[RMDB]
RNA sequence: GGGAACGACUCGAGUAGAGUCGAAAAGGCGAUCCGCCCUGUAUUAUUCUCGGCCCCGGCGAGCCGUCGAUGGCGCAUCAAACCGACGAAUACUGCCUGCUCAGCCGACUGGCGGAGGCCGAACAGCGGCCUGAUGCUAUUUCGAUAGCAUCAGGCCAAAAGAAACAACAACAACAAC
Reactivity to 2A3 in 0.01 (KOAc 150mM, MgCl2 10mM, bicine 150mM(pH8.5), 24C), signal-to-noise 3, nucleotides 027 to 126: g030g000c010g050a230u010c000c000g010c000c010c000u000g060u030a300u300u090a160u240u170c040u010c000g010g000c020c000c010c000g010g000c020g000a010g010c000c000g010u000c000g020a030u120g040g090c100g000c090a170u130c070a220a130a110c010c020g020a020c010g030a010a020u150a250c020u010g000c000c000u000g000c000u050c120a000g000c000c000g020a030c050u000g000g000c020g000g010a040g020g010c000c020g000a050a080c050a090g100c030
Reactivity to DMS in 0.01 (KOAc 150mM, MgCl2 10mM, bicine 150mM(pH8.5), 24C), signal-to-noise 2, nucleotides 027 to 126: g000g000c040g000a180u000c000c000g100c000c000c140u020g000u070a080u020u100a140u000u000c150u000c030g000g000c000c020c220c190g000g000c000g030a060g000c080c070g010u000c040g050a150u120g040g030c080g140c190a070u040c220a030a180a250c060c000g000a130c060g000a070a020u050a120c100u050g000c000c000u050g000c030u000c250a060g000c000c030g000a080c180u000g000g070c100g040g000a070g000g040c010c000g000a050a040c210a200g000c270